Structure probing data (2A3) for a 207-nucleotide construct. The RNA was probed in 150 mM KOAc, 10 mM MgCl2 and 150 mM bicine (pH 8.5) at 24 C. Reactivities are given for positions 27 through 156.

RNA sequence: GGGAACGACUCGAGUAGAGUCGAAAAGCCAACUGGAUUCGUCCAGUUGGCAAAAAGAUAUGGAGAACUGAGGACAUGCUCUGAUGUCGGAAACGACAUUGGAGCAACAGCCUCAAUUCUCCUAAGUCAAAAAACUGAGCGGUUCGCCGCUCAGUAACGGAAGUUUUAAGUUCGCUUAAAACUUCCGAAAAGAAACAACAACAACAAC
Reactivity to 2A3 in 0.01 (KOAc 150mM, MgCl2 10mM, bicine 150mM(pH8.5), 24C), signal-to-noise 1, nucleotides 027 to 156: g000c000c000a000a000c000u000g000g020a030u050u080c180g030u050c090c000a000g020u000u060g000g080c000a040a010a000a000a000g000a000u020a000u020g000g000a000g000a020a000c010u010g000a010g030g020a010c050a190u300g000c000u000c010u030g000a010u000g010u000c000g000g000a000a020a000c000g000a000c000a000u010u000g020g000a000g000c000a000a000c030a000g010c000c000u000c000a000a000u000u000c000u000c000c000u000a030a000g010u000c000a020a000a000a000a110a210c000u000g000a000g000c000g030g090u110u100c230g060c080c000g030c010u000c000a000g000u000a010a020